[RMDB]
RNA sequence: GGGAACGACUCGAGUAGAGUCGAAAAGAUAUGGACACCGUAAGUCCUGCCACGUGCCAGACGCACCUCGGAAACGAGGUGGCGUCGGUAAUACGUGGAACUACAGGACUUACGGUGUCCUAAGUCAGGUAAGAUACAAGUUCGCUUGUAUCUUACCAAAAGAAACAACAACAACAAC
Reactivity to DMS in 0.01 (KOAc 150mM, MgCl2 10mM, bicine 150mM(pH8.5), 24C), signal-to-noise 3, nucleotides 027 to 126: g000a070u000a300u000g000g000a010c000a010c000c000g050u010a000a010g000u000c000c000u000g000c010c000a010c000g040u000g070c000c010a190g060a010c000g000c000a050c000c010u000c000g000g000a130a110a260c000g010a000g000g030u000g000g020c000g020u000c000g000g000u000a040a030u010a240c010g000u000g000g010a110a020c070u020a300c030a000g000g000a000c000u000u010a000c010g000g000u000g000u010c000c000u000a010a020g010u000c050a120